[RMDB]
RNA sequence: GGGAACGACUCGAGUAGAGUCGAAAAAUAGCGACAGGGCCGAAGCGUGCGAGACGAUACCUGCAGAACAAGCAACGGCCAACAACGUACCAGCGGCCGAGGAAAGACGCAGGUUACGAGCGCAUCAAAUUUUAAAAAUAUUCGUAUUUUUAAAAUUAAAAGAAACAACAACAACAAC
Reactivity to DMS in 0.01 (KOAc 150mM, MgCl2 10mM, bicine 150mM(pH8.5), 24C), signal-to-noise 5, nucleotides 027 to 126: a050u000a080g010c020g020a050c040a060g000g000g000c030c020g020a070a150g010c090g040u000g010c010g010a090g010a100c090g000a230u010a050c040c030u000g000c050a090g020a100a080c140a050a120g010c120a070a230c040g000g010c020c010a080a170c150a050a100c120g010u020a070c110c050a090g000c200g020g000c010c000g000a090g000g000a090a090a100g010a090c100g010c000a030g000g000u010u000a060c050g000a200g010c000g000c040a020u020c050a060
Reactivity to 2A3 in 0.01 (KOAc 150mM, MgCl2 10mM, bicine 150mM(pH8.5), 24C), signal-to-noise 5, nucleotides 027 to 126: a000u080a000g030c000g050a030c030a080g020g040g030c000c020g030a070a020g040c030g030u040g010c040g030a060g020a050c050g010a020u070a070c030c000u030g010c020a030g060a170a040c070a100a000g050c020a040a090c020g000g000c050c000a020a010c010a010a020c030g110u100a080c010c030a010g030c030g020g000c010c000g040a030g030g050a110a090a030g010a000c030g000c020a030g000g000u010u000a010c010g010a010g000c010g000c020a020u060c030a040
Overview: An RNA of 177 nucleotides, treated with DMS and 2A3 and read out base by base. DMS adducts were read by reverse transcription with MarathonRT. The 2A3 profile rests on 4,653 reads.